[RMDB]
RNA sequence: GGGAACGACUCGAGUAGAGUCGAAAACGACCGCAGUUCGCUGCGGUCGAAAAGAACUGACUACCGUUCGCCUAGCCGGUGUCAGUUUAAGGCCGGAGAUUAAAACCCUGACGUUCGCGUCAGGGAACAUUUUAUAAUCGUUCGCGAUUAUAAAAUGAAAAGAAACAACAACAACAAC
Reactivity to 2A3 in 0.01 (KOAc 150mM, MgCl2 10mM, bicine 150mM(pH8.5), 24C), signal-to-noise 3, nucleotides 027 to 126: c010g000a010c000c000g000c000a000g020u060u140c170g040c090u010g000c000g020g000u000c000g000a000a010a000a010g030a010a010c010u010g010a000c030u140a050c100c010g030u090u120c050g080c050c080u100a050g040c010c000g000g000u020g000u010c020a010g010u020u000u030a050a010g060g000c000c050g120g070a170g020a060u180u270a080a080a120a190c000c000c000u000g000a010c000g020u040u050c300g010c000g090u000c010a000g000g000g000a000a000
Reactivity to DMS in 0.01 (KOAc 150mM, MgCl2 10mM, bicine 150mM(pH8.5), 24C), signal-to-noise 4, nucleotides 027 to 126: c020g020a020c010c000g030c000a000g010u000u010c190g020c010u000g020c000g010g010u000c000g010a020a030a110a180g010a020a020c000u000g000a020c020u010a040c000c000g010u000u010c110g010c080c070u010a110g020c300c000g000g010u000g000u000c000a010g000u010u000u000a050a100g000g020c030c010g010g010a140g010a120u000u010a050a050a160a120c010c000c000u010g000a010c000g000u010u020c210g010c020g010u000c000a000g000g000g010a000a010